[RMDB]
RNA sequence: GGGAACGACUCGAGUAGAGUCGAAAAGAUAUGGAUUACAGGGAGCUGGUGGUCGGAAACGACCAUCAGCAUCGAUCUGUUAUCCUAAGUCAAAAGUACUCACAGACGUUCGCGUCUGUGAGUACAACUUCAUAGUAAAGUUCGCUUUACUAUGAAGAAAAGAAACAACAACAACAAC
Reactivity to DMS in 0.01 (KOAc 150mM, MgCl2 10mM, bicine 150mM(pH8.5), 24C), signal-to-noise 3, nucleotides 027 to 126: g010a010u000a030u020g000g000a030u000u000a010c010a000g000g000g000a010g050c000u000g000g030u000g000g010u000c000g000g010a000a010a020c010g000a010c000c000a000u000c000a010g030c010a040u000c180g010a130u010c000u000g000u000u000a020u000c000c000u000a010a110g000u000c010a070a090a130a160g010u000a000c000u000c010a000c000a000g020a020c000g020u000u010c260g040c010g010u010c000u000g010u000g000a000g010u000a000c010a020a090
Reactivity to 2A3 in 0.01 (KOAc 150mM, MgCl2 10mM, bicine 150mM(pH8.5), 24C), signal-to-noise 2, nucleotides 027 to 126: g010a010u020a000u040g000g000a000u020u000a010c000a000g010g020g000a040g000c000u010g020g010u000g000g010u010c000g000g000a030a020a000c010g000a010c000c020a000u000c010a000g010c000a000u020c000g000a010u000c010u000g000u000u010a000u000c000c010u000a020a000g010u000c010a060a010a080a190g000u000a000c000u010c000a020c000a000g000a010c000g030u110u120c300g050c010g170u010c010u000g000u000g000a000g000u000a000c000a000a000